RNA sequence: GGGAACGACUCGAGUAGAGUCGAAAAAGUGAGUGGAAGAUAGAAAAGUGCAGAAAGAGUGCAUCAACCAUGGUCAGUUUAUGCAACCACACAACUGCUUUUCUGCAUUACCAACAAAGUUGAGUGCCCUAAUGGGCAGUUUCGACUGCCCAUUAGGAAAAGAAACAACAACAACAAC
Reactivity to DMS in 0.01 (KOAc 150mM, MgCl2 10mM, bicine 150mM(pH8.5), 24C), signal-to-noise 4, nucleotides 027 to 126: a060g020u010g000a140g010u000g010g000a090a060g010a100u010a070g010a050a040a070a070g030u010g010c050a010g000a070a040a070g010a110g020u010g000c010a030u000c070a030a010c040c070a110u000g010g010u010c170a100g000u000u000u010a020u010g010c040a080a100c090c040a080c140a050c080a070a120c080u000g000c030u010u000u000u000c020u000g000c090a040u010u000a080c050c020a040a040c090a040a080a070g020u010u000g000a080g000u000g010c210
Reactivity to 2A3 in 0.01 (KOAc 150mM, MgCl2 10mM, bicine 150mM(pH8.5), 24C), signal-to-noise 3, nucleotides 027 to 126: a000g200u100g070a030g020u050g030g020a040a010g050a100u140a050g060a020a080a030a000g020u030g040c020a000g070a020a090a010g080a020g030u050g010c000a010u020c030a020a010c010c030a090u110g050g040u180c080a080g000u020u010u010a020u020g000c010a060a050c070c020a060c000a000c020a060a100c030u090g030c000u090u020u020u000c010u010g000c010a020u010u070a080c010c000a010a050c040a070a060a060g000u070u070g040a060g090u030g020c000
Record summary:
Chemical mapping of a 177-nucleotide RNA with DMS and 2A3. 2A3 adducts were read by reverse transcription with SuperScript II with manganese. The data come from the RNA Mapping Database (RMDB), library OK2TST. The RNA was probed in 150 mM KOAc, 10 mM MgCl2 and 150 mM bicine (pH 8.5) at 24 C. DMS (dimethyl sulfate) methylates the pairing face of unpaired adenines and cytosines.